Chemical mapping of a 207-nucleotide RNA with DMS and 2A3. The 2A3 profile rests on 2,064 reads. For 2A3 the reverse transcriptase was SuperScript II with manganese. For DMS the reverse transcriptase was MarathonRT. The RNA was probed in 150 mM KOAc, 10 mM MgCl2 and 150 mM bicine (pH 8.5) at 24 C. Values cover nucleotides 27 to 156.
RNA sequence: GGGAACGACUCGAGUAGAGUCGAAAAGGCCAGUUUUUCCGCGUUUGCGGUUUCUCGCCCAGUUUAUGGGAAAACUGUGCCAGAAUGAGGAAAUUGAGAUUUUUAGUGGUCACUCUCUAUAUAUGUGAUUUUCGGCCAGUCAAGAGGCCACUCUUGAGGUUAUAUCGUUAUUCGUAACGAUAUAACCAAAAGAAACAACAACAACAAC
Reactivity to DMS in 0.01 (KOAc 150mM, MgCl2 10mM, bicine 150mM(pH8.5), 24C), signal-to-noise 1, nucleotides 027 to 156: g000g000c020c010a040g020u000u040u000u000u000c000c010g040c040g040u010u020u020g030c060g010g030u010u010u000c110u020c060g000c020c020c020a130g020u000u010u020a090u020g010g080g000a030a030a040a030c010u000g000u000g020c010c010a120g000a080a060u000g000a140g010g010a040a050a100u020u000g000a180g000a140u000u000u000u000u000a090g010u000g000g020u000c040a070c090u020c020u020c040u000a130u000a110u000a080u020g020u020g000a100u000u000u000u020c110g020g000c060c040a110g010u020c060a020a110g000a160g030g010c000c020a070c070u000c020u000u000g000a300
Reactivity to 2A3 in 0.01 (KOAc 150mM, MgCl2 10mM, bicine 150mM(pH8.5), 24C), signal-to-noise 3, nucleotides 027 to 156: g010g000c010c000a000g000u000u000u000u020u030c010c020g030c080g080u070u190u300g030c060g020g000u030u100u050c100u060c030g030c000c000c000a020g030u140u190u250a110u170g010g010g000a010a000a000a000c020u040g090u190g030c000c010a010g040a020a080u180g030a050g070g080a040a080a020u160u090g030a050g050a120u040u090u080u090u300a130g020u080g060g020u030c020a000c020u060c000u000c030u040a040u020a030u020a050u300g040u050g090a130u080u070u130u230c070g030g020c010c010a030g060u100c040a050a050g040a050g140g000c000c010a010c010u000c000u000u010g000a020

Source: RMDB library OK3TST, as collected in RNAgym.